[RMDB]
RNA sequence: GGGAACGACUCGAGUAGAGUCGAAAAGCGGGUGGCCUACCGGAGGGCGUCAGAGACACCCGCUCGGGCUACUCGGUCGCACGGGGCUGAGUAGCUGACACCUAACCCGUGCUACCCUCGGGGAGCUUGCCCGUGGGCGACCCGAGGGGAAAUCCUGCUUCCUUGUUUAGUUCGCUAAACAAGGAAGAAAAGAAACAACAACAACAAC
Reactivity to 2A3 in 0.01 (KOAc 150mM, MgCl2 10mM, bicine 150mM(pH8.5), 24C), signal-to-noise 2, nucleotides 027 to 156: g000c000g000g000g000u020g030g040c010c010u060a080c090c090g090g100a160g040g060g030c080g060u130c100a030g030a000g010a110c000a000c000c000c010g000c030u030c080g000g000g010c000u010a000c000u000c000g020g010u010c020g000c010a000c000g000g000g000g000c000u020g000a000g010u010a000g000c000u000g010a000c020a050c260c000u050a070a070c000c000c000g000u000g000c000u010a010c000c000c000u000c010g000g000g000g010a010g020c010u030u050g070c020c050c040g050u250g010g010g010c000g000a020c000c010c000g000a000g000g000g000g000a000a000a000u060c020c050u050g030
The record gives the reactivity of an RNA of 207 nucleotides to 2A3. Values cover nucleotides 27 to 156. The 2A3 profile rests on 1,939 reads.